[RMDB]
RNA sequence: GGGAACGACUCGAGUAGAGUCGAAAAAGCAUUGGAACGUCGGAGAAACUACUCCCAAGAAGCAAAGAGAGGUCUUAGGAAGCGGACGAGAUCCCCACAACGCCGGAGAAUCUCUGGAAGGGGAAAGCAAAUAGUGACUGUUCGCAGUCACUAUUUGAAAAGAAACAACAACAACAAC
Reactivity to DMS in 0.01 (KOAc 150mM, MgCl2 10mM, bicine 150mM(pH8.5), 24C), signal-to-noise 3, nucleotides 027 to 126: a060g010c050a050u000u000g020g000a060a040c070g010u010c120g010g010a130g020a100a070a140c090u020a100c090u000c000c020c040a080a080g000a060a110g010c080a040a060a100g000a060g010a080g030g010u010c070u010u000a100g000g000a100a080g000c080g000g010a070c110g000a100g000a170u010c010c000c010c040a060c120a080a070c200g000c020c030g010g000a040g000a110a100u010c020u000c010u000g010g040a130a110g000g000g010g000a050a040a060g010
Reactivity to 2A3 in 0.01 (KOAc 150mM, MgCl2 10mM, bicine 150mM(pH8.5), 24C), signal-to-noise 2, nucleotides 027 to 126: a000g030c030a090u060u100g040g020a140a050c030g020u040c050g040g010a050g090a050a200a020c060u130a060c020u080c050c000c010a010a060g070a020a000g060c080a100a110a000g050a020g000a030g040g030u000c020u050u030a020g010g020a050a030g020c030g030g030a000c030g010a030g050a080u040c000c010c040c020a050c020a120a050c080g050c030c020g050g000a050g020a140a230u090c010u010c010u060g020g020a040a000g010g000g000g010a000a060a000g080
This 177-nucleotide RNA was probed chemically with DMS and 2A3. Reactivities are given for positions 27 through 126. For DMS the reverse transcriptase was MarathonRT. The RNA was probed in 150 mM KOAc, 10 mM MgCl2 and 150 mM bicine (pH 8.5) at 24 C. Source: RMDB library VIROID, as collected in RNAgym. For 2A3, 1,947 sequencing reads were counted.